Source: RMDB library RFMREP, as collected in RNAgym. This 177-nucleotide RNA was probed chemically with 2A3 and DMS. The RNA was probed in 150 mM KOAc, 10 mM MgCl2 and 150 mM bicine (pH 8.5) at 24 C. The DMS profile rests on 1,648 reads. DMS adducts were read by reverse transcription with MarathonRT. For 2A3, 896 sequencing reads were counted. Reactivities are given for positions 27 through 126.
RNA sequence: GGGAACGACUCGAGUAGAGUCGAAAAAGUGUAGGGGAGAGUAAGAAGCCAUCCCAUCAGUUAGUAAGUAGGGUAAGGGCCUACUUAGACGAAGACGGGUACGGGGAAUUAUCGUUUGAUUCCGGAGCAUGUUUGUCAUCUUCGGAUGACAAACAUGAAAAGAAACAACAACAACAAC
Reactivity to 2A3 in 0.01 (KOAc 150mM, MgCl2 10mM, bicine 150mM(pH8.5), 24C), signal-to-noise 1, nucleotides 027 to 126: a000g170u130g050u050a070g030g010g020g010a110g010a000g040u040a030a020g090a100a000g030c000c000a060u000c000c000c000a050u030c040a060g060u000u140a010g080u060a110a000g000u010a010g010g010g030u050a070a100g080g040g010c000c010u000a010c020u030u030a030g010a020c010g040a080a030g060a040c050g010g000g000u080a070c070g000g000g000g110a000a070u070u050a160u190c070g050u010u020u140g030a070u060u020c000c060g010g000a040g050
Reactivity to DMS in 0.01 (KOAc 150mM, MgCl2 10mM, bicine 150mM(pH8.5), 24C), signal-to-noise 2, nucleotides 027 to 126: a110g020u000g020u000a070g000g000g040g000a090g000a070g030u000a020a060g020a100a120g020c050c060a120u000c020c010c000a120u010c060a070g020u010u000a120g010u000a000a030g010u000a000g010g000g030u020a120a070g020g000g000c000c000u000a020c010u000u000a040g020a110c070g000a060a150g000a070c100g010g010g010u010a060c080g010g000g010g000a130a070u010u000a040u010c140g020u010u010u000g000a140u000u000c020c010g020g010a130g010